[RMDB]
This 177-nucleotide RNA was probed chemically with DMS and 2A3. The reactions ran in a buffer of 150 mM KOAc, 10 mM MgCl2 and 150 mM bicine (pH 8.5), at 24 C. Values cover nucleotides 27 to 126. Source: RMDB library OK2TRN, as collected in RNAgym. 2A3 adducts were read by reverse transcription with SuperScript II with manganese.
RNA sequence: GGGAACGACUCGAGUAGAGUCGAAAACACAUUUUGUCCUGGUGUUCUGCCUCAUCUCAGGUCUGGGAGGAAUAGUAUCAGCCAUCAAUGGACUGGAGCCUCUGAAACUAUGAGAACCCAAAUAAACAUCUGUAACUGGGUUCGCCCAGUUACAGAUAAAAGAAACAACAACAACAAC
Reactivity to DMS in 0.01 (KOAc 150mM, MgCl2 10mM, bicine 150mM(pH8.5), 24C), signal-to-noise 1, nucleotides 027 to 126: c100a100c090a090u000u000u050u000g000u010c000c050u020g020g070u030g000u000u000c040u000g040c010c050u000c130a080u000c060u000c020a110g000g000u000c050u000g000g000g020a050g020g000a120a040u020a100g000u000a090u000c020a070g000c040c030a040u000c160a130a160u050g010g010a030c050u000g000g000a120g000c090c010u010c030u000g000a090a130a050c020u000a040u020g010a090g000a070a200c000c000c050a000a060a090u030a110a110a100c220
Reactivity to 2A3 in 0.01 (KOAc 150mM, MgCl2 10mM, bicine 150mM(pH8.5), 24C), signal-to-noise 1, nucleotides 027 to 126: c030a030c020a000u030u110u100u300g100u090c080c040u070g070g000u100g020u000u020c070u050g040c030c000u020c060a130u000c010u030c010a060g010g010u030c020u050g030g030g000a040g060g010a030a070u090a120g070u030a070u210c000a000g000c000c000a090u130c100a120a300u190g030g040a160c000u000g020g040a010g050c000c000u060c000u020g020a030a020a000c030u060a120u300g010a010g000a060a020c000c010c000a080a080a020u140a000a140a020c050